[RMDB]
RNA sequence: GGGAACGACUCGAGUAGAGUCGAAAAAUAGAUCGCCCCCGUAGUGUGUUUCGGCCGAUCUGGCUGGUUCCGUGUUGCCUCCGCCACAUCCGCAUCUCUUCCACCGGCUCUCCCGACGCCUCGCGCUAAAUUGCCUUAAUUUCGAUUAAGGCAAUUUAAAAGAAACAACAACAACAAC
Reactivity to DMS in 0.01 (KOAc 150mM, MgCl2 10mM, bicine 150mM(pH8.5), 24C), signal-to-noise 7, nucleotides 027 to 126: a100u010a070g000a080u010c050g000c030c010c020c020c040g040u000a060g000u010g020u010g010u000u000u000c030g000g020c060c020g010a070u010c060u020g000g010c050u000g010g000u000u000c040c030g010u010g020u010u010g000c030c000u000c030c040g000c030c020a060c070a060u000c040c030g000c060a070u020c040u010c040u000u000c030c030a070c070c030g000g000c030u000c040u010c020c010c010g010a110c110g010c030c000u010c060g000c070g010c090u000
Reactivity to 2A3 in 0.01 (KOAc 150mM, MgCl2 10mM, bicine 150mM(pH8.5), 24C), signal-to-noise 7, nucleotides 027 to 126: a000u130a020g050a040u040c030g030c000c010c000c010c020g050u060a080g050u070g020u020g030u090u060u060c010g000g000c020c030g040a100u040c060u050g020g010c030u030g020g040u060u040c020c010g030u040g040u070u060g030c000c010u020c020c010g020c010c000a020c010a040u030c010c000g030c030a080u030c030u010c000u090u020c010c020a030c010c010g020g000c000u000c010u010c020c000c010g010a030c020g000c000c010u020c030g020c000g000c020u010